RNA sequence: GGGAACGACUCGAGUAGAGUCGAAAAAUUUUUCUUCAAGCUUAGAAAGUGCUUGAGAAGUCUUUGCCAUCUGCAUAAGAGAUACCAUACCUUCUUGCAUUCUAGCUCCUCCUGAAGCAGAACAAAUAGGAGUGAUUAUAUUCGUAUAAUCACUCCUAAAAGAAACAACAACAACAAC
Reactivity to DMS in 0.01 (KOAc 150mM, MgCl2 10mM, bicine 150mM(pH8.5), 24C), signal-to-noise 3, nucleotides 027 to 126: a050u000u010u030u020u000c010u000u000c020a000a020g000c030u000u000a140g010a100a110a150g010u010g010c010u000u010g000a020g000a040a050g000u010c040u000u000u000g000c000c090a070u020c020u010g020c070a070u020a060a070g010a080g020a090u020a070c120c050a050u030a080c090c040u000u000c030u000u000g000c060a070u000u010c100u030a110g030c040u020c020c010u000c050c020u000g030a100a100g000c040a040g000a060a090c180a020a040a140u000
Reactivity to 2A3 in 0.01 (KOAc 150mM, MgCl2 10mM, bicine 150mM(pH8.5), 24C), signal-to-noise 9, nucleotides 027 to 126: a000u100u090u000u000u010c010u080u080c010a000a010g000c010u100u160a100g170a150a180a060g210u170g040c000u010u010g020a010g020a020a010g050u040c050u060u060u040g050c010c000a120u040c050u080g020c010a050u070a210a030g030a020g010a050u080a160c020c020a040u080a150c020c010u060u070c010u030u060g010c010a060u060u060c030u040a050g030c010u010c010c000u030c010c010u050g030a050a010g040c040a030g020a100a060c040a040a080a010u090
The data come from the RNA Mapping Database (RMDB), library OK1LIB.
Chemical mapping of a 177-nucleotide RNA with DMS and 2A3.
In probing experiments dimethyl sulfate is read out at A N1 and C N3, which are open when not base-paired.